About this RNA:
Chemical mapping of a 207-nucleotide RNA with 2A3 and DMS. For DMS, 1,686 sequencing reads were counted. The data come from the RNA Mapping Database (RMDB), library RNAMAK. The RNA was probed in 150 mM KOAc, 10 mM MgCl2 and 150 mM bicine (pH 8.5) at 24 C.
RNA sequence: GGGAACGACUCGAGUAGAGUCGAAAAGUGCUCUUCGGAGCACAGGGAUCCUAAGUCUAGUCGGGCUCGUGACAUGACCUUGUCUCGGAAACGAGACUGGGUCAACAGCACGAGUCUCUAGCGUGCUAGAUAUGGAAGAGAACCCAUUCGUGGGUAACCAACUUGGGAAAUUCGUUUCCCAAGUUGGAAAAGAAACAACAACAACAAC
Reactivity to 2A3 in 0.01 (KOAc 150mM, MgCl2 10mM, bicine 150mM(pH8.5), 24C), signal-to-noise 2, nucleotides 027 to 156: g010u020g000c000u000c030u000u110c300g110g000a000g000c000a000c000a010g020g090g060a080u000c000c000u080a190a040g070u030c010u000a000g010u010c020g000g000g010c000u000c000g010u040g060a140c030a100u030g010a000c000c000u020u050g000u000c000u000c000g050g020a080a080a070c010g010a000g000a000c000u000g000g000g000u010c000a000a000c000a000g040c000a000c000g000a000g000u000c000u010c010u020a010g020c030g060u150g010c020u000a010g000a020u030a060u180g040g000a140a060g110a030g100a120a080c000c040c000a000u060u090c270g110u120g060g000g000u070a040a030
Reactivity to DMS in 0.01 (KOAc 150mM, MgCl2 10mM, bicine 150mM(pH8.5), 24C), signal-to-noise 1, nucleotides 027 to 156: g030u000g010c010u000c000u000u020c290g000g020a060g010c010a000c010a080g000g000g010a230u000c010c000u000a030a270g010u000c000u000a000g070u000c050g000g020g040c010u020c020g000u010g000a060c030a300u000g000a020c000c010u000u010g010u000c000u000c000g080g010a200a090a160c000g040a010g000a010c000u000g040g010g000u000c000a000a000c090a110g000c000a020c000g030a000g010u000c000u000c050u000a120g010c180g040u000g050c010u000a040g020a070u010a280u010g000g000a120a100g000a200g000a160a090c000c010c020a080u000u000c200g010u030g010g000g010u000a070a160